[RMDB]
RNA sequence: GGGAACGACUCGAGUAGAGUCGAAAAACGCGGACUUCGGUCCGCGUAAAACCUUUGUGACGUCACCUUGCUAGACCAUUUUCAUCCCAUUGGGAUGACUAUGGUCUUGGACCAAGGUGAGCGUCACUCUGGUAAAACUCUCCGGUUCGCCGGAGAGGUUACUGUCAUCGUUCGCGAUGACAGUAACAAAAGAAACAACAACAACAAC
Reactivity to DMS in 0.01 (KOAc 150mM, MgCl2 10mM, bicine 150mM(pH8.5), 24C), signal-to-noise 1, nucleotides 027 to 156: a020c010g090c000g060g020a020c020u010u010c300g060g010u000c000c020g020c020g000u010a030a000a130a070c010c010u000u000u000g020u000g000a020c040g020u010c010a010c010c030u020u030g010c060u000a050g020a000c000c000a030u000u000u010u000c000a010u010c010c020c000a300u000u000g040g000g010a030u000g000a010c040u000a000u000g060g000u010c030u000u000g010g000a130c220c020a020a010g030g050u010g010a050g050c000g010u000c050a010c000u000c030u000g000g040u010a080a090a140a280c020u000c010u000c000c000g000g000u000u000c300g070c020c000g020g040a000g000a020g000
Reactivity to 2A3 in 0.01 (KOAc 150mM, MgCl2 10mM, bicine 150mM(pH8.5), 24C), signal-to-noise 2, nucleotides 027 to 156: a000c010g030c030g010g010a020c040u070u110c300g120g000u020c000c010g000c000g000u010a000a000a010a000c000c010u000u020u040g000u000g000a000c000g010u040c000a010c000c000u000u010g000c010u030a010g000a020c010c000a000u000u030u000u020c000a020u010c040c040c160a300u120u300g020g000g000a000u020g000a000c000u010a000u000g000g000u000c000u000u010g030g040a040c070c030a000a000g030g000u000g000a010g010c010g000u000c000a000c000u000c000u010g000g000u050a110a100a060a060c000u000c000u000c000c000g030g060u100u070c290g000c060c000g010g000a000g000a000g000
Background:
Chemical mapping of a 207-nucleotide RNA with DMS and 2A3. The 2A3 profile rests on 2,194 reads. It was measured as part of the RMDB library RNAMAK. For 2A3 the reverse transcriptase was SuperScript II with manganese. The DMS profile rests on 2,279 reads.